[RMDB]
RNA sequence: GGGAACGACUCGAGUAGAGUCGAAAAGAAGAUGCAGAUUCUGAUUUAGUAUAUCUAGGUAGGGACCAAAGAUUUUGAACUUUGAACCAGCUUCCUAAUGAUACUUUCAGAUACUGCUGGUUCAAAAUACGGAGCCUAUAUUCGUAUAGGCUCCGUAAAAAGAAACAACAACAACAAC
Reactivity to DMS in 0.01 (KOAc 150mM, MgCl2 10mM, bicine 150mM(pH8.5), 24C), signal-to-noise 2, nucleotides 027 to 126: g020a160a040g010a130u010g000c000a020g030a300u000u000c020u010g000a010u020u020u010a020g000u000a040u000a080u040c130u000a050g000g000u000a050g000g000g020a170c140c010a040a100a080g020a110u000u010u010u010g010a040a120c050u020u010u000g000a000a130c080c000a030g000c050u000u040c040c020u030a010a060u020g010a020u000a090c190u000u010u000c000a010g000a110u030a240c040u010g000c000u000g000g040u010u000c000a040a050a110a120
Reactivity to 2A3 in 0.01 (KOAc 150mM, MgCl2 10mM, bicine 150mM(pH8.5), 24C), signal-to-noise 2, nucleotides 027 to 126: g030a000a000g000a040u150g000c040a000g050a050u000u060c000u040g020a040u230u160u040a060g030u010a020u010a010u230c040u000a020g040g000u020a000g000g000g050a050c010c020a040a000a060g000a150u190u080u120u270g090a090a090c020u000u000u010g000a040a040c020c000a060g110c000u160u110c040c020u090a160a000u160g100a000u000a140c030u000u050u010c020a020g000a020u080a100c040u030g000c000u000g000g000u040u080c000a000a020a080a000